[RMDB]
RNA sequence: GGGAACGACUCGAGUAGAGUCGAAAAGGCGCAAUGAUGAACAUGCGACUAUGCUUAAGCAAUCCCAUUGUCUGAGUCACAGAUUCGUGCUUAGGAUCGCAUAGUUGUUCAUCACAAUGGGAGCGCAGCUCAGCUGACUAUUCGUAGUCAGCUGAGCAAAAGAAACAACAACAACAAC
Reactivity to 2A3 in 0.01 (KOAc 150mM, MgCl2 10mM, bicine 150mM(pH8.5), 24C), signal-to-noise 3, nucleotides 027 to 126: g070g000c010g000c010a040a190u040g000a010u010g000a010a000c010a010u060g020c010g090a020c010u000a000u020g010c000u020u020a020a010g020c000a010a020u000c010c000c000a000u000u020g010u010c000u000g000a000g000u000c010a010c000a170g010a030u050u030c030g020u030g000c010u010u020a010g010g010a030u060c040g000c040a030u010a030g070u000u040g000u020u010c000a000u020c000a000c010a020a040u050g030g020g000a050g010c000g000c000a000
Reactivity to DMS in 0.01 (KOAc 150mM, MgCl2 10mM, bicine 150mM(pH8.5), 24C), signal-to-noise 4, nucleotides 027 to 126: g000g020c010g010c000a150a110u000g000a010u000g000a010a020c010a100u000g030c160g010a170c070u000a010u000g000c010u000u000a030a030g010c040a020a020u000c010c000c000a010u000u000g000u000c010u000g000a010g000u000c000a000c000a010g000a040u000u000c110g020u000g010c020u000u000a020g010g000a080u010c210g000c020a020u000a030g010u010u000g020u000u000c000a000u000c010a030c130a030a060u000g000g010g000a220g010c040g000c010a140
Structure probing data (2A3 and DMS) for a 177-nucleotide construct. The reactions ran in a buffer of 150 mM KOAc, 10 mM MgCl2 and 150 mM bicine (pH 8.5), at 24 C. DMS adducts were read by reverse transcription with MarathonRT. Values cover nucleotides 27 to 126. The DMS profile rests on 6,525 reads. The 2A3 profile rests on 6,041 reads.